[RMDB]
Chemical mapping of a 207-nucleotide RNA with 2A3 and DMS. The 2A3 profile rests on 3,777 reads. The reactions ran in a buffer of 150 mM KOAc, 10 mM MgCl2 and 150 mM bicine (pH 8.5), at 24 C.

RNA sequence: GGGAACGACUCGAGUAGAGUCGAAAAGAUAUGGAAGACUGGGAGACGGGGAGUGGACGUUGAUCGGAGCUCGGAAACGAGCUCCGGGAGUCCAUGAAAGACGUCUUUGAUCAGUCUUCCUAAGUCAAAGUUGAUGCAAGUUCGCUUGCAUCAACAACAUAGUACACGAGUUCGCUCGUGUACUAUGAAAAGAAACAACAACAACAAC
Reactivity to 2A3 in 0.01 (KOAc 150mM, MgCl2 10mM, bicine 150mM(pH8.5), 24C), signal-to-noise 3, nucleotides 027 to 156: g010a030u100a040u100g000g000a010a000g000a000c010u000g020g050g000a010g000a010c010g000g000g040g010a120g030u010g000g010a010c020g110u210u030g000a010u010c010g000g000a000g010c000u000c000g040g020a060a040a030c010g000a000g030c030u010c000c020g000g000g000a000g000u000c000c020a010u040g040a040a060a030g190a020c000g000u000c000u070u060u030g060a060u080c010a000g000u000c000u000u000c000c000u010a010a010g010u000c050a120a060a030g000u000u000g000a000u000g000c000a000a010g010u050u120c250g080c110u000u000g000c000a000u000c000a000a000c000a000a000
Reactivity to DMS in 0.01 (KOAc 150mM, MgCl2 10mM, bicine 150mM(pH8.5), 24C), signal-to-noise 2, nucleotides 027 to 156: g010a090u000a290u000g020g040a030a040g000a010c000u010g010g040g010a030g000a050c010g010g030g010g020a300g020u000g000g000a000c000g000u000u000g010a060u000c020g000g000a010g020c010u000c010g010g000a140a130a290c030g020a040g020c000u000c010c010g010g000g010a060g030u000c010c010a000u000g000a060a150a200g030a080c020g000u000c000u010u000u030g010a090u000c000a030g000u000c010u000u000c000c000u000a010a090g010u000c050a090a110a160g030u010u000g010a000u000g000c000a000a020g030u000u010c300g000c020u010u020g000c020a010u000c010a010a010c000a090a220